RNA sequence: GGGAACGACUCGAGUAGAGUCGAAAAGAUAUGGAAGGUAGACAUGCUCGUGGGUCGGAAACGACCUAAACGAGCAACAGCUACUUCCUAAGUCAAACCAUUGCAGUUCUUCGGAACUGCAAUGGAAUCAAGUAGUCUGGUUCGCCAGACUACUUGAAAAAGAAACAACAACAACAAC
Reactivity to 2A3 in 0.01 (KOAc 150mM, MgCl2 10mM, bicine 150mM(pH8.5), 24C), signal-to-noise 1, nucleotides 027 to 126: g010a010u060a040u170g010g010a020a010g180g020u080a030g040a080c070a120u090g000c000u000c010g000u020g000g000g000u000c030g000g020a050a070a030c000g020a000c000c020u040a160a200a040c000g000a000g010c000a010a000c010a020g030c000u000a010c000u000u000c020c000u030a080a010g020u020c050a060a060a150c010c000a000u010u000g000c030a010g000u020u020c050u130u160c260g190g010a010a000c000u000g000c000a000a020u010g010g010a000a060
Reactivity to DMS in 0.01 (KOAc 150mM, MgCl2 10mM, bicine 150mM(pH8.5), 24C), signal-to-noise 2, nucleotides 027 to 126: g010a040u020a300u010g000g000a020a020g010g000u010a020g000a070c070a230u000g020c010u000c000g060u000g010g000g030u000c000g000g000a050a090a200c010g020a000c000c010u000a030a070a040c010g000a020g020c030a000a000c250a110g000c030u010a030c000u010u000c020c000u010a050a170g010u000c040a090a090a220c020c000a010u000u000g020c000a000g010u000u010c010u000u000c210g000g000a010a010c000u000g000c010a000a000u000g000g000a050a060